[RMDB]
RNA sequence: GGGAACGACUCGAGUAGAGUCGAAAAUGAGGACUUGGAGGCAAAGCAUGGCAUGCUUCCCUGCAUGCCCUUGGAUCAAGGGUGGCACAGGCUUAGCACGCACACCGCCGCUGGGUGUCUUGCCUGAGGCAUAAGCACAUUUCGAUGUGCUUAUGCCAAAAGAAACAACAACAACAAC
Reactivity to 2A3 in 0.01 (KOAc 150mM, MgCl2 10mM, bicine 150mM(pH8.5), 24C), signal-to-noise 2, nucleotides 027 to 126: u190g020a050g060g000a000c030u060u050g020g020a000g010g000c030a020a050a030g090c070a070u110g060g000c000a000u020g010c020u030u050c000c010c010u000g010c010a150u100g000c000c000c000u050u070g090g090a110u260c060a020a010g010g010g010u040g010g060c000a020c030a030g020g000c070u090u090a010g010c020a000c020g000c010a030c010a010c020c050g020c020c020g020c040u010g090g010g000u010g090u010c000u030u060g020c000c000u050g060a090
Reactivity to DMS in 0.01 (KOAc 150mM, MgCl2 10mM, bicine 150mM(pH8.5), 24C), signal-to-noise 2, nucleotides 027 to 126: u020g020a080g010g000a090c070u000u000g010g000a080g010g000c090a050a070a120g000c140a160u000g000g000c020a060u000g000c020u010u000c120c040c030u030g000c040a120u000g010c000c000c060u000u000g000g020a110u000c090a040a040g010g010g030u000g020g010c080a070c050a080g010g040c070u010u000a080g000c050a030c070g020c040a070c080a070c100c070g010c050c020g020c090u000g000g010g000u000g010u000c040u000u000g000c030c010u000g000a120
An RNA of 177 nucleotides, treated with 2A3 and DMS and read out base by base. The RNA was probed in 150 mM KOAc, 10 mM MgCl2 and 150 mM bicine (pH 8.5) at 24 C. For DMS the reverse transcriptase was MarathonRT. The data come from the RNA Mapping Database (RMDB), library OK2TRN. For DMS, 2,476 sequencing reads were counted. For 2A3 the reverse transcriptase was SuperScript II with manganese.